[RMDB]
An RNA of 207 nucleotides, treated with 2A3 and read out base by base. Conditions: 150 mM KOAc, 10 mM MgCl2 and 150 mM bicine (pH 8.5), 24 C. For 2A3 the reverse transcriptase was SuperScript II with manganese. Reactivities are given for positions 27 through 156.
RNA sequence: GGGAACGACUCGAGUAGAGUCGAAAAACGGCUGGCUACGGCCAGCCGAAUCGGGCCAAAGGCAGUCGCCCGACGACACAGGCGAUCGUUCGCCCAAGCGCUGCACACGACUAUACGUAAUCGUGAAUUGAUCACGCAACCUUCGGGUUGCGUGAAAGGAACAUUCAAAGUUCGCUUUGAAUGUUCCAAAAGAAACAACAACAACAAC
Reactivity to 2A3 in 0.01 (KOAc 150mM, MgCl2 10mM, bicine 150mM(pH8.5), 24C), signal-to-noise 1, nucleotides 027 to 156: a000c010g000g000c000u030g010g000c020u000a090c290g060g010c000c000a000g000c020c010g010a000a000u000c010g000g020g000c030c100a110a120a180g160g010c030a070g050u090c020g010c000c020c000g020a020c010g030a000c020a010c050a160g120g000c010g020a050u020c070g100u130u050c050g180c010c020c000a080a010g030c030g010c050u010g000c060a030c000a000c020g020a000c000u120a030u150a300c140g190u110a030a050u030c010g010u010g030a050a070u190u190g080a050u020c000a000c000g000c010a000a000c000c000u050u030c120g160g010g000u000u000g000c000g000u000g000a000a000a000